[RMDB]
RNA sequence: GGGAACGACUCGAGUAGAGUCGAAAACCAACAAUUACGACUACGCUCUGGCUGCUUAAUUGACGGCCACGUCGAACCGGUUCACGCCUGAUAGACCGGUGAGACGUAACUUCAUCAGGCUGGCAUCUGACGGCGCUCGCCGCGAAGGGUGCGAGAAGCCACAUUACCACUUCGGUGGUAAUGUGGCAAAAGAAACAACAACAACAAC
Reactivity to 2A3 in 0.01 (KOAc 150mM, MgCl2 10mM, bicine 150mM(pH8.5), 24C), signal-to-noise 2, nucleotides 027 to 156: c020c050a010a110c080a020a060u270u270a100c090g060a020c040u300a040c150g090c200u160c020u090g020g000c020u020g020c040u090u080a140a160u300u100g050a100c000g000g000c000c030a010c000g010u000c000g000a000a000c000c000g000g030u010u010c020a000c010g000c040c040u030g000a000u000a010g030a000c010c000g000g080u020g000a040g020a000c000g010u030a010a010c080u160u160c040a000u000c000a010g000g000c000u000g010g000c040a030u000c030u080g050a150c020g030g000c030g050c190u210c230g030c030c000g000c040g000a180a110g060g030g000u010g000c040g000a020g010a010a010